[RMDB]
RNA sequence: GGGAACGACUCGAGUAGAGUCGAAAAUUGUGACCAUGACGGUCCCUGCUGGUAGCAUCGACAGCAACCUCCUCACUUCGUCGCCUUUCUACUGGACAUCCUCCAUCACCUCUGCCCCAUAUGGCCAUGCGAGUGCAUGAUUCGUCAUGCACUCGCAAAAAGAAACAACAACAACAAC
Reactivity to DMS in 0.01 (KOAc 150mM, MgCl2 10mM, bicine 150mM(pH8.5), 24C), signal-to-noise 1, nucleotides 027 to 126: u010u020g040u020g000a100c050c000a170u000g030a200c130g000g000u000c000c030c050u000g000c010u000g000g010u000a100g000c060a040u000c000g020a070c050a090g020c050a060a200c080c000u000c000c020u000c040a070c030u000u000c060g040u000c080g020c040c000u000u000u000c030u000a070c080u000g010g000a010c080a030u000c040c030u000c040c020a020u020c050a170c020c010u020c060u000g000c080c000c000c070a060u000a080u000g000g010c050c080a150